[RMDB]
RNA sequence: GGGAACGACUCGAGUAGAGUCGAAAAAGCAUGAUUCCGAAGGGAUGACGUUUCCGGAGGAUCCGAUGGAAAGCCUCCCCGGAUGGAGAAAGUCUAAACGGAUCCUGUGAGGCCGCCGUGAGGAUCGCCCUAUAAUCCCGUUCGCGGGAUUAUAGGGAAAAGAAACAACAACAACAAC
Reactivity to 2A3 in 0.01 (KOAc 150mM, MgCl2 10mM, bicine 150mM(pH8.5), 24C), signal-to-noise 6, nucleotides 027 to 126: a020g120c080a090u100g010a060u140u020c010c010g020a050a050g100g000g020a110u060g030a050c050g010u020u070u000c020c020g020g080a020g030g000a010u000c000c010g040a060u070g030g030a140a090a030g020c000c010u030c010c010c030c070g120g050a090u160g020g000a040g050a090a110a030g140u040c030u070a030a120a090c020g020g010a020u060c010c020u110g080u090g070a030g010g020c020c020g010c000c010g210u030g050a030g000g000a040u010c000g000
Reactivity to DMS in 0.01 (KOAc 150mM, MgCl2 10mM, bicine 150mM(pH8.5), 24C), signal-to-noise 4, nucleotides 027 to 126: a030g010c100a070u030g000a060u040u000c010c010g000a260a120g000g020g000a030u010g000a150c070g020u000u010u020c020c020g010g000a110g000g000a010u010c030c000g010a160u020g010g000a030a100a140g000c180c010u010c000c010c070c060g020g010a240u020g010g000a050g000a130a160a090g020u010c030u000a040a080a240c030g000g010a010u000c050c040u020g040u020g000a020g000g020c050c170g000c090c000g010u020g000a190g000g010a050u000c030g000